Background
Chemical mapping of a 207-nucleotide RNA with 2A3 and DMS.

RNA sequence: GGGAACGACUCGAGUAGAGUCGAAAACAACACGUCCUCGUCGUACAGAGUGGUAACAUGUGUCACCACAUAUCCAAGCUUGGGUACACGGGCUUGACCCAACCCCUUGAGCGGAUGGUGGCACAUGAAAAGAAGUAACACUUCGGUGUUACUUCAAGUGUUAUUCACUGUUCGCAGUGAAUAACACAAAAGAAACAACAACAACAAC
Reactivity to 2A3 in 0.01 (KOAc 150mM, MgCl2 10mM, bicine 150mM(pH8.5), 24C), signal-to-noise 6, nucleotides 027 to 156: c060a010a020c020a010c080g100u100c020c020u040c040g160u040c030g040u140a080c060a100g060a020g050u110g030g090u130a120a020c010a010u000g010u000g000u000c000a000c020c020a060c050a130u200a040u050c030c010a120a050g060c040u030u020g000g000g010u010a000c010a010c030g010g000g000c030u290u300g200a300c000c000c000a000a030c000c000c000c000u040u120g020a010g020c000g000g010a010u020g000g000u000g000g000c000a000c000a000u000g000a000a000a000a020g000a000a000g000u000a000a000c000a000c000u040u070c230g060g000u000g000u000u000a000c000u000u000c000a000a010
Reactivity to DMS in 0.01 (KOAc 150mM, MgCl2 10mM, bicine 150mM(pH8.5), 24C), signal-to-noise 2, nucleotides 027 to 156: c030a080a080c060a090c050g030u000c030c000u010c060g000u000c050g050u000a190c100a120g000a160g000u000g000g010u000a050a150c000a020u000g020u000g000u000c020a000c010c000a050c080a090u000a070u000c010c020a020a150g020c070u000u000g000g020g040u000a120c160a070c140g010g010g020c030u000u000g000a140c030c010c000a080a060c070c010c010c030u000u000g010a070g030c150g010g010a050u010g000g020u010g000g000c010a010c010a010u010g010a050a060a080a100g020a000a000g000u000a000a010c000a010c010u010u000c300g050g070u000g000u000u000a000c000u010u000c000a000a100
Record summary:
Conditions: 150 mM KOAc, 10 mM MgCl2 and 150 mM bicine (pH 8.5), 24 C. Source: RMDB library M2RFPK, as collected in RNAgym. The DMS profile rests on 5,152 reads.